[RMDB]
RNA sequence: GGGAACGACUCGAGUAGAGUCGAAAAGAUAUGGAAUGAUUUCGAGCUGGAUGUCGGAAACGACAUUAGCGAUGAGAAAUACAUUCCUAAGUCAAAACAAUGUAAUUCCUUCGGGAAUUACAUUGAAGCUAGUUGUACAGUUCGCUGUACAACUAGCAAAAGAAACAACAACAACAAC
Reactivity to DMS in 0.01 (KOAc 150mM, MgCl2 10mM, bicine 150mM(pH8.5), 24C), signal-to-noise 2, nucleotides 027 to 126: g000a020u000a040u000g000g000a020a010u010g000a060u000u000u000c010g010a080g020c010u000g020g050a000u000g020u000c000g010g000a060a020a060c000g030a030c000a000u000u000a000g020c010g010a150u010g000a300g000a010a010a000u010a220c000a020u000u000c000c000u020a010a120g000u000c020a140a100a090a230c010a000a010u000g000u010a010a030u000u000c000c000u010u000c270g030g020g000a010a000u000u000a000c000a000u000u000g010a170a120
Reactivity to 2A3 in 0.01 (KOAc 150mM, MgCl2 10mM, bicine 150mM(pH8.5), 24C), signal-to-noise 2, nucleotides 027 to 126: g000a000u000a000u020g000g000a000a020u010g000a010u020u030u080c160g050a060g010c010u110g170g050a020u000g010u010c010g000g000a010a020a020c000g000a000c000a010u030u030a000g020c030g100a120u300g090a030g060a030a020a010u180a300c020a000u000u000c000c010u000a020a000g000u010c000a020a020a110a150c010a020a000u010g010u000a010a000u000u020c010c000u010u060c300g040g000g030a000a000u010u010a000c010a000u000u010g000a040a010